[RMDB]
RNA sequence: GGGAACGACUCGAGUAGAGUCGAAAAUAGCAAUACCAUAUCGUGAUCUCUAAUGAGCGUCCUCAUACUGUCCAAGGUGUUCAACCAUUUUACAAUGAAUAUUUAUGGCCUUGGUCGGUAACUGCGCCUGUUACAUAUCCUUCGGGAUAUGUAACAGAAAAGAAACAACAACAACAAC
Reactivity to 2A3 in 0.01 (KOAc 150mM, MgCl2 10mM, bicine 150mM(pH8.5), 24C), signal-to-noise 4, nucleotides 027 to 126: u100a010g050c030a030a100u040a180c030c050a040u040a020u140c040g070u070g090a060u060c000u000c000u030a080a070u110g010a010g060c010g030u020c000c010u050c000a030u040a050c000u000g010u010c010c000a010a000g000g020u050g070u140u120c020a040a040c020c010a040u060u080u060u060a120c120a060a050u060g050a090a030u120a110u110u210u060a100u150g120g000c000c000u000u010g000g000u010c000g000g010u040a060a050c050u090g030c010g080c030
Reactivity to DMS in 0.01 (KOAc 150mM, MgCl2 10mM, bicine 150mM(pH8.5), 24C), signal-to-noise 3, nucleotides 027 to 126: u000a100g010c090a120a080u000a190c100c080a070u000a050u010c020g030u000g000a050u010c020u000c020u000a070a080u010g000a030g010c040g010u000c030c000u010c040a220u010a030c030u000g000u000c010c000a010a000g010g020u000g010u000u000c090a070a150c150c030a040u000u000u000u010a070c200a060a030u000g000a070a130u000a110u000u000u000a060u010g000g010c000c010u000u000g000g000u000c010g000g000u000a040a070c160u010g020c180g020c170